Background:
Source: RMDB library OK3TST, as collected in RNAgym. Structure probing data (DMS and 2A3) for a 207-nucleotide construct. Conditions: 150 mM KOAc, 10 mM MgCl2 and 150 mM bicine (pH 8.5), 24 C. For DMS, 3,226 sequencing reads were counted. DMS (dimethyl sulfate) methylates the pairing face of unpaired adenines and cytosines.
RNA sequence: GGGAACGACUCGAGUAGAGUCGAAAACAGAUCAUCGCCGAGACACUGAAUCCGCUGCGUGCGCAGGUCGAGAAGAGCAUGGCCGGUGCGGCGUUCGGCGGGCAGAUGGGCCAGCUGCCCCGCGGAGUGUUCACCACGAUGCAGCAGGCCAUGACGGGAAGUUGAGUUUAUUCGUAAACUCAACUUCAAAAGAAACAACAACAACAAC
Reactivity to DMS in 0.01 (KOAc 150mM, MgCl2 10mM, bicine 150mM(pH8.5), 24C), signal-to-noise 1, nucleotides 027 to 156: c040a070g020a080u010c000a040u000c030g010c000c060g030a170g030a160c040a150c020u010g010a080a100u000c000c010g050c000u010g020c010g010u000g010c020g030c050a060g040g000u020c030g020a180g020a120a160g020a190g030c030a120u010g010g010c010c030g020g020u000g000c000g000g070c020g010u000u020c000g000g030c030g070g000g000c000a060g000a070u010g000g000g050c010c010a160g010c020u000g030c030c040c000c010g010c020g010g010a180g020u000g020u000u000c100a240c020c010a040c040g070a020u000g040c010a030g030c030a140g000g040c010c010a010u000g000a120c070g030g040
Reactivity to 2A3 in 0.01 (KOAc 150mM, MgCl2 10mM, bicine 150mM(pH8.5), 24C), signal-to-noise 6, nucleotides 027 to 156: c070a010g070a130u100c010a020u050c080g050c040c030g060a060g020a060c050a020c080u070g040a090a140u070c010c000g000c010u040g010c020g030u110g090c040g000c030a030g010g040u040c040g050a040g110a270a060g070a050g060c100a120u180g020g000c010c020g190g100u070g030c020g010g000c020g030u150u170c040g020g000c000g020g000g000c020a020g040a140u120g010g030g010c010c010a010g000c000u020g000c000c000c000c010g000c010g010g020a090g030u160g110u180u180c120a070c060c010a010c000g010a020u070g000c010a010g000c010a010g000g000c020c010a020u070g040a020c020g080g050